[RMDB]
RNA sequence: GGGAACGACUCGAGUAGAGUCGAAAAGAUAUGGAGAUUUCAAGGGAGUCGGUCGGAAACGACCCGACUUUGAUCUUGGAUCUCCUAAGUCAAAAGAUAGCUUGUGGCUUCGGCCACAAGCUAUCAACAGAUGGCUAAUGUUCGCAUUAGCCAUCUGAAAAGAAACAACAACAACAAC
Reactivity to 2A3 in 0.01 (KOAc 150mM, MgCl2 10mM, bicine 150mM(pH8.5), 24C), signal-to-noise 1, nucleotides 027 to 126: g020a010u020a030u150g010g000a000g010a030u080u300u300c000a000a010g080g090g000a000g000u010c010g030g020u010c000g010g020a120a060a020c070g040a050c160c160c070g000a000c010u080u070u090g080a060u060c000u000u000g020g000a000u000c000u000c000c000u010a050a020g000u000c020a000a000a180a080g000a010u010a010g010c030u000u000g000u000g000g000c020u030u180c300g080g000c000c000a010c000a000a000g010c010u020a000u020c000a000a000
Reactivity to DMS in 0.01 (KOAc 150mM, MgCl2 10mM, bicine 150mM(pH8.5), 24C), signal-to-noise 1, nucleotides 027 to 126: g000a030u010a300u000g000g000a000g000a030u010u020u000c000a010a000g000g010g000a020g000u000c000g030g000u000c010g020g000a100a080a180c020g010a020c080c050c040g010a010c010u000u000u000g000a060u010c010u000u000g000g000a010u000c000u000c000c000u000a020a040g000u010c020a110a110a110a130g000a000u000a000g010c010u000u010g060u000g000g000c010u000u010c260g040g000c000c000a010c000a000a000g010c000u000a000u000c000a070a120

The record gives the reactivity of an RNA of 177 nucleotides to 2A3 and DMS. It was measured as part of the RMDB library TTRDEL. For 2A3 the reverse transcriptase was SuperScript II with manganese. For DMS the reverse transcriptase was MarathonRT.